[RMDB]
RNA sequence: GGGAACGACUCGAGUAGAGUCGAAAAUAAGGUCUUAACAAAAAUGUCACAGGUACUCCGCAAGCGUCUCGAAAACCUCAUGGUCGAGGACGCUCGUAUCCUCUUCCGUAACUUCGCAGGCGAAGAGAGGCAGUUCAACCCCGCCGGUGAGCGUAACAUCACAGAAAGAAUUCGUUCUUUCUGUGAUAAAAGAAACAACAACAACAAC
Reactivity to DMS in 0.01 (KOAc 150mM, MgCl2 10mM, bicine 150mM(pH8.5), 24C), signal-to-noise 3, nucleotides 027 to 156: u000a080a080g020g010u000c030u000u000a110a170c060a030a120a110a090a100u000g020u000c030a090c100a050g010g010u000a080c030u000c040c010g010c060a100a060g000c020g010u010c000u010c020g000a110a070a090a070c040c010u000c140a080u010g040g030u000c040g000a100g030g000a030c020g000c090u010c060g000u010a090u010c010c000u000c010u000u000c010c030g010u000a060a070c030u000u010c070g000c090a130g000g010c020g000a050a070g000a100g000a080g000g020c020a070g020u020u010c050a080a120c000c000c010c060g020c010c020g000g030u010g000a090g030c030g020u000a070a140c140
Reactivity to 2A3 in 0.01 (KOAc 150mM, MgCl2 10mM, bicine 150mM(pH8.5), 24C), signal-to-noise 5, nucleotides 027 to 156: u140a030a040g080g030u060c060u140u150a140a070c070a070a050a090a060a060u120g080u070c040a040c030a060g030g010u050a030c020u020c050c030g030c050a030a020g010c010g030u010c020u040c040g030a080a070a080a110c030c020u150c100a140u260g050g000u010c010g010a030g010g040a010c010g010c020u010c010g020u040a050u040c010c000u000c000u050u020c040c000g060u050a080a110c030u060u070c060g020c130a040g030g040c010g030a070a000g040a000g010a020g060g000c020a030g010u050u090c010a030a130c000c000c000c000g000c010c020g080g040u060g020a050g040c020g010u030a060a030c030